[RMDB]
RNA sequence: GGGAACGACUCGAGUAGAGUCGAAAAAAACUUGGGUAUAGGGGCGAAAGACUAAUCGAACCAUCUAGUAGCUGGUUCCCUCCGAAAUUUCCCUCAGGAUAGCAGCAACUUAUUUACGAUAGUUUUAGUUAUGGUGAGUGUUCGCACUCACCAUAACAAAAGAAACAACAACAACAAC
Reactivity to 2A3 in 0.01 (KOAc 150mM, MgCl2 10mM, bicine 150mM(pH8.5), 24C), signal-to-noise 3, nucleotides 027 to 126: a010a000a050c100u110u070g040g000g020u110a090u120a120g000g000g010g030c030g060a120a060a000g040a060c050u060a060a080u080c020g020a020a000c040c020a010u030c010u020a090g070u080a010g070c010u020g050g000u050u030c000c010c000u020c010c010g040a020a030a060u020u040u000c000c000c000u030c080a020g010g040a020u070a060g030c020a000g010c010a000a050c020u110u090a090u170u280u110a040c080g050a080u060a140g040u050u010u010u060a000
Reactivity to DMS in 0.01 (KOAc 150mM, MgCl2 10mM, bicine 150mM(pH8.5), 24C), signal-to-noise 2, nucleotides 027 to 126: a080a050a030c050u050u000g000g000g010u000a070u010a090g040g000g000g060c060g000a040a110a030g010a170c080u050a080a040u030c090g000a070a010c040c100a070u000c060u020a090g000u000a050g000c160u000g000g000u000u030c000c010c000u010c000c000g020a070a040a100u000u000u000c000c000c010u020c120a150g000g000a060u010a070g000c020a010g070c030a070a020c110u000u020a110u000u000u010a030c140g010a050u020a030g010u000u000u040u000a110
The record gives the reactivity of an RNA of 177 nucleotides to 2A3 and DMS. Source: RMDB libraries RFM100 and RFMREP, as collected in RNAgym.